RNA sequence: GGGAACGACUCGAGUAGAGUCGAAAACUAGACCAGCUUGGGUAACAAAGCAAAAAUUUUUAAAAAUUAGCAGAGUAUGGUGCUGCAUGCCUAUAGUUCCAGCUACUUGGGAGACUGAGGCAGGAAGAUCCCUUAAGCCUGGGAGUUGAAGGCUACACGUACGUAAGAAAUUCGUUUCUUACGUACGAAAAGAAACAACAACAACAAC
Reactivity to DMS in 0.01 (KOAc 150mM, MgCl2 10mM, bicine 150mM(pH8.5), 24C), signal-to-noise 1, nucleotides 027 to 156: c010u010a070g010a200c010c000a110g010c040u010u000g000g000g020u000a040a070c040a090a170a230g000c030a010a050a090a080a050u020u000u000u000u020a030a050a070a040a210u010u010a150g010c070a090g040a210g010u000a060u000g010g050u000g040c000u010g010c090a070u000g000c000c050u000a100u010a020g040u000u010c000c010a090g040c080u040a040c150u030u000g010g000g000a110g000a070c050u000g010a040g040g010c060a040g010g000a050a080g000a070u020c020c000c000u000u000a010a040g010c020c010u000g060g010g000a150g010u010u000g000a040a110g010g030c000u000a100c030a150
Reactivity to 2A3 in 0.01 (KOAc 150mM, MgCl2 10mM, bicine 150mM(pH8.5), 24C), signal-to-noise 2, nucleotides 027 to 156: c030u030a050g090a050c000c010a000g060c010u060u060g040g050g000u090a100a020c050a120a020a000g050c080a080a070a050a040a060u290u140u080u150u290a110a210a040a000a060u060u050a020g030c000a010g000a010g070u100a120u130g060g040u060g070c000u000g020c040a070u060g000c020c000u120a100u050a160g000u050u040c000c000a020g010c050u140a110c050u150u040g030g000g010a090g010a010c000u010g010a020g000g000c020a010g020g010a010a040g040a100u070c020c000c000u080u060a050a010g000c010c000u020g030g030g020a100g020u090u070g020a040a010g000g000c000u060a040c010a000

Source: RMDB library OK3TST, as collected in RNAgym.
Structure probing data (DMS and 2A3) for a 207-nucleotide construct.
Values cover nucleotides 27 to 156.
The RNA was probed in 150 mM KOAc, 10 mM MgCl2 and 150 mM bicine (pH 8.5) at 24 C.
For 2A3 the reverse transcriptase was SuperScript II with manganese.
For DMS, 1,822 sequencing reads were counted.
For 2A3, 720 sequencing reads were counted.